[RMDB]
RNA sequence: GGGAACGACUCGAGUAGAGUCGAAAAAUCGAAUAAGGCCUAAGCGUUCGCGUAAAUAAACUCUUGUCGGAUGUGCAUUGUCUUUGAUUCGGGUGAUUAAAAAUACAGGGCGACAUCGAGUCCGGACGCUUACUCAGGUUUUCGAACCUGAGUAAGCAAAAGAAACAACAACAACAAC
Reactivity to DMS in 0.01 (KOAc 150mM, MgCl2 10mM, bicine 150mM(pH8.5), 24C), signal-to-noise 1, nucleotides 027 to 126: a100u020c030g000a010a020u050a050a100g000g000c040c090u000a070a080g010c000g020u000u030c000g050c080g020u010a110a100a020u010a020a130a100c200u030c030u000u000g050u010c050g000g000a070u000g000u000g000c070a110u000u000g010u040c030u020u000u010g000a030u000u000c020g020g040g020u000g000a150u000u050a060a040a040a040a030u010a100c050a230g000g030g000c000g020a020c050a030u000c010g060a020g010u000c010c020g010g000a140c150
Reactivity to 2A3 in 0.01 (KOAc 150mM, MgCl2 10mM, bicine 150mM(pH8.5), 24C), signal-to-noise 3, nucleotides 027 to 126: a000u010c000g010a020a040u130a080a040g110g000c020c040u020a110a010g020c000g000u010u030c010g000c010g070u030a020a120a120u140a010a230a100c070u160c030u130u160g190u200c030g030g060a060u020g020u060g040c090a100u000u180g040u020c000u050u050u110g060a040u060u020c010g010g000g090u050g050a090u130u270a110a090a040a030a000u200a070c060a070g110g000g000c050g000a000c010a050u080c020g000a010g000u000c000c010g050g000a040c110